[RMDB]
RNA sequence: GGGAACGACUCGAGUAGAGUCGAAAAGAUAUGGACGAAGCGGGAGCGACCCGUAGCGCAGAGAUAUGGGAUCGGAAACGAUCCCAUGUGUAGCUAUCGGUCGCGAAGAACGCUUCGUCCUAAGUCAGCCAUAAUACUACUUCGGUAGUAUUAUGGCAAAAGAAACAACAACAACAAC
Reactivity to DMS in 0.01 (KOAc 150mM, MgCl2 10mM, bicine 150mM(pH8.5), 24C), signal-to-noise 3, nucleotides 027 to 126: g010a000u010a020u000g000g000a010c000g010a010a010g020c000g010g020g000a020g010c000g000a010c000c000c180g030u010a000g030c000g020c260a190g020a050g010a020u010a000u000g000g000g000a010u000c000g010g000a020a010a070c000g000a010u000c000c000c000a000u000g000u000g030u000a020g020c000u000a010u010c300g010g000u000c000g020c010g000a030a180g000a100a240c000g000c010u000u000c000g000u000c000c000u000a000a030g000u000c010a240